[RMDB]
This 170-nucleotide RNA was probed chemically with DMS and 2A3. For 2A3, 9,816 sequencing reads were counted. For DMS the reverse transcriptase was MarathonRT. It was measured as part of the RMDB library 15KLIB.

RNA sequence: GGGAACGACUCGAGUAGAGUCGAAAAGUUCUGCAUGGAAGUUGUAAACAAGUACUUCGAAAUCUAUGACGGUGGUUGUCUUAAUGCUUCUGAAGUGGUUGUUAAUAAUUUAGACAAGAGUGCUGGCGAACUAACACCUUCGGGUGUUAGAAAAGAAACAACAACAACAAC
Reactivity to DMS in 0.01 (KOAc 150mM, MgCl2 10mM, bicine 150mM(pH8.5), 24C), signal-to-noise 5, nucleotides 027 to 129: g020u000u000c010u020g000c050a090u050g000g000a030a030g030u000u000g050u050a030a040a050c100a080a080g030u000a050c000u000u000c030g000a050a060a070u040c120u000a010u000g030a080c060g030g040u060g020g020u020u020g000u000c050u030u040a040a030u020g000c020u000u010c000u040g020a050a030g040u000g000g000u030u010g000u000u040a050a030u000a050a070u050u040u020a140g000a090c120a010a060g010a080g020u000g000c040u040g010g040c000g010a050a120
Reactivity to 2A3 in 0.01 (KOAc 150mM, MgCl2 10mM, bicine 150mM(pH8.5), 24C), signal-to-noise 6, nucleotides 027 to 129: g000u060u000c000u060g070c020a080u080g040g050a100a050g000u030u020g120u200a090a070a020c000a030a020g190u020a000c020u010u000c020g040a010a030a130u090c070u140a130u120g020a030c030g020g100u170g060g100u160u110g010u000c000u020u070a070a030u120g040c050u040u020c020u130g040a050a010g010u000g060g020u000u000g010u020u000a040a020u100a020a000u060u070u130a060g000a020c020a060a000g030a000g020u000g030c000u000g010g010c030g010a020a000

Conditions: 150 mM KOAc, 10 mM MgCl2 and 150 mM bicine (pH 8.5), 24 C. Reactivities are given for positions 27 through 129. 2A3 adducts were read by reverse transcription with SuperScript II with manganese.